Chemical mapping of a 177-nucleotide RNA with DMS. For DMS the reverse transcriptase was MarathonRT. Conditions: 150 mM KOAc, 10 mM MgCl2 and 150 mM bicine (pH 8.5), 24 C.
RNA sequence: GGGAACGACUCGAGUAGAGUCGAAAAAGGUUGUGCUCGCUACACUGCUGGUGUGUGCAUUCUGAGACCUCUUGUAUUCAAUCUGUGAAGGAUAUGUGUAUUAAUCCGUACACCCGUAUAGCCUCAAUCCAUCCAUGCUCUUCGGAGCAUGGAUGGAAAAAGAAACAACAACAACAAC
Reactivity to DMS in 0.01 (KOAc 150mM, MgCl2 10mM, bicine 150mM(pH8.5), 24C), signal-to-noise 1, nucleotides 027 to 126: a040g000g010u000u000g020u010g030c050u020c040g000c030u000a030c030a120c070u010g000c060u000g000g040u000g020u010g020u000g010c040a090u000u000c080u000g000a210g000a140c040c020u000c040u060u010g020u000a050u000u000c050a080a070u000c070u000g010u000g020a190a090g010g000a040u000a130u000g050u000g010u000a050u000u000a090a040u070c090c170g050u010a040c040a070c010c090c040g000u010a040u040a140g000c060c030u010c110a090a170